The data come from the RNA Mapping Database (RMDB), library OK2TST. The record gives the reactivity of an RNA of 177 nucleotides to DMS and 2A3. The 2A3 profile rests on 681 reads. The RNA was probed in 150 mM KOAc, 10 mM MgCl2 and 150 mM bicine (pH 8.5) at 24 C. Reactivities are given for positions 27 through 126.
RNA sequence: GGGAACGACUCGAGUAGAGUCGAAAACUUGAUUGUGGUGCGGUUGAAUCUAUCGUCAUUGACGCUAAAGAUGAGUUUGCCAAUGAUUACUGCCUGCCGACUAUCAAAGCAAACGGCAUGUACAUGAGACGUGAGCAAAAUUCGUUUUGCUCACGUCAAAAGAAACAACAACAACAAC
Reactivity to DMS in 0.01 (KOAc 150mM, MgCl2 10mM, bicine 150mM(pH8.5), 24C), signal-to-noise 2, nucleotides 027 to 126: c040u000u000g000a060u000u020g020u000g010g030u000g000c090g000g000u000u010g010a050a110u010c070u000a100u020c100g000u010c000a130u000u010g030a080c060g000c100u020a040a190a110g000a130u030g010a080g000u000u030u000g030c010c030a040a040u000g000a080u010u000a110c130u010g000c030c030u010g020c090c030g000a090c070u000a150u000c140a080a150a110g000c050a040a070a120c050g000g000c040a050u000g010u030a070c190a100u000g010a230
Reactivity to 2A3 in 0.01 (KOAc 150mM, MgCl2 10mM, bicine 150mM(pH8.5), 24C), signal-to-noise 1, nucleotides 027 to 126: c010u040u120g070a010u120u160g040u070g120g110u050g060c000g010g090u040u120g070a070a040u130c090u090a010u130c050g020u040c090a100u000u110g010a040c060g000c120u200a020a000a180g070a130u080g000a080g130u030u120u000g000c030c000a040a020u070g080a040u060u120a050c050u020g000c040c000u000g000c010c000g040a030c010u140a110u210c130a230a160a000g000c000a060a070a000c000g020g020c060a010u070g140u000a030c000a060u010g090a000

Source information: 2A3 adducts were read by reverse transcription with SuperScript II with manganese.